[RMDB]
Chemical mapping of a 207-nucleotide RNA with 2A3. For 2A3 the reverse transcriptase was SuperScript II with manganese. It was measured as part of the RMDB library OK3TST. For 2A3, 283 sequencing reads were counted.
RNA sequence: GGGAACGACUCGAGUAGAGUCGAAAACUAGUGUACCAAUUGAUGAACCAGUGAGUUUCAAAACCAUCGUGCCAACACUGAAAACCGUGGCUUAUAGUAGACUCAAGAAAUAUGGCACGGAAAGCGGUAAGCUGAUGUCCACAGAUGAGACACAAGACCACACAGCCCUAUUCGUAGGGCUGUGUGGAAAAGAAACAACAACAACAAC
Reactivity to 2A3 in 0.01 (KOAc 150mM, MgCl2 10mM, bicine 150mM(pH8.5), 24C), signal-to-noise 1, nucleotides 027 to 156: c090u140a060g020u030g030u280a150c020c020a050a120u130u170g050a070u120g000a010a010c000c000a020g010u070g050a040g000u000u050u090c140a040a060a000a000c000c000a010u030c000g050u000g000c000c000a100a040c050a050c050u170g040a040a070a060a060c140c080g050u100g040g000c020u190u070a050u090a060g200u040a050g060a260c020u020c090a050a100g000a000a100a000u090a110u150g040g040c020a070c110g000g000a130a020a000g100c030g050g140u160a130a040g000c010u000g000a150u160g100u150c000c090a000c000a050g130a160u060g040a000g000a050c000a000c000a020a090g170a040